[RMDB]
RNA sequence: GGGAACGACUCGAGUAGAGUCGAAAAAAACAACCCUGCUAAGUAGCUCCCAGUAUUCCCCAGUUACCAGUGGAGGCUCCAAAGAUAUAUCUUUUGUGUGAAUUGCACAGCCCACGAUCAGGGAGGAGUACUGUUAUUUUUUCGAAAAUAACAGUACAAAAGAAACAACAACAACAAC
Reactivity to 2A3 in 0.01 (KOAc 150mM, MgCl2 10mM, bicine 150mM(pH8.5), 24C), signal-to-noise 2, nucleotides 027 to 126: a040a000a020c050a050a040c020c000c010u010g020c040u070a100a030g020u030a050g100c000u020c000c020c010a020g080u070a210u070u080c030c000c030c000a020g040u060u070a030c010c030a010g000u030g040g080a110g100g010c010u020c040c000a070a070a010g070a020u090a030u020a110u300c010u040u120u080u010g020u010g010u010g130a300a300u150u120g020c000a000c020a020g040c000c000c020a010c030g020a060u100c020a000g040g000g000a000g030g000a030
Reactivity to DMS in 0.01 (KOAc 150mM, MgCl2 10mM, bicine 150mM(pH8.5), 24C), signal-to-noise 5, nucleotides 027 to 126: a060a050a090c080a100a100c030c010c000u000g000c090u010a060a140g010u010a060g010c040u000c010c010c010a100g020u010a140u000u000c020c010c000c080a110g010u000u010a050c040c070a090g010u010g000g030a100g020g010c020u000c090c060a040a060a060g010a100u010a090u000a060u000c020u000u000u000u000g030u000g030u000g010a090a090u000u010g020c020a020c010a080g000c030c000c010a050c080g000a080u010c090a060g000g000g010a090g010g000a160